[RMDB]
RNA sequence: GGGAACGACUCGAGUAGAGUCGAAAACUUGCAAACUUCGGUUUGCAAGAAAGAACGCUGCGGCGAGCAGCAGCCAGAGAAGGCAAGACAAUCGCCAUAAAAAAAUCUAUGAGUUCGCUCAUAGAAAGUGACAUAUAGAGUUCGCUCUAUAUGUCACAAAAGAAACAACAACAACAAC
Reactivity to DMS in 0.01 (KOAc 150mM, MgCl2 10mM, bicine 150mM(pH8.5), 24C), signal-to-noise 2, nucleotides 027 to 126: c010u000u010g000c000a010a000a010c000u010u030c200g010g000u000u000u000g000c000a000a000g000a090a110a070g010a160a110c140g020c000u020g020c070g000g000c000g020a010g010c000a020g040c010a100g010c010c010a110g010a100g030a200a150g010g030c010a100a120g000a080c100a070a080u010c040g020c010c040a110u050a000a010a040a090a100a090a080u000c010u020a010u000g010a020g010u010u020c250g010c010u010c000a000u000a020g010a000a040a110
Reactivity to 2A3 in 0.01 (KOAc 150mM, MgCl2 10mM, bicine 150mM(pH8.5), 24C), signal-to-noise 3, nucleotides 027 to 126: c000u010u000g000c000a030a000a000c020u040u040c090g090g000u000u000u000g010c010a000a000g000a000a000a000g030a040a030c070g000c020u020g000c020g040g010c020g030a050g030c000a010g020c000a000g010c000c010a050g050a040g070a300a050g020g000c030a010a010g080a030c050a040a140u000c010g000c030c040a040u300a010a200a010a000a010a010a050u020c010u010a000u000g000a000g050u040u130c180g050c060u000c000a000u000a010g000a010a030a010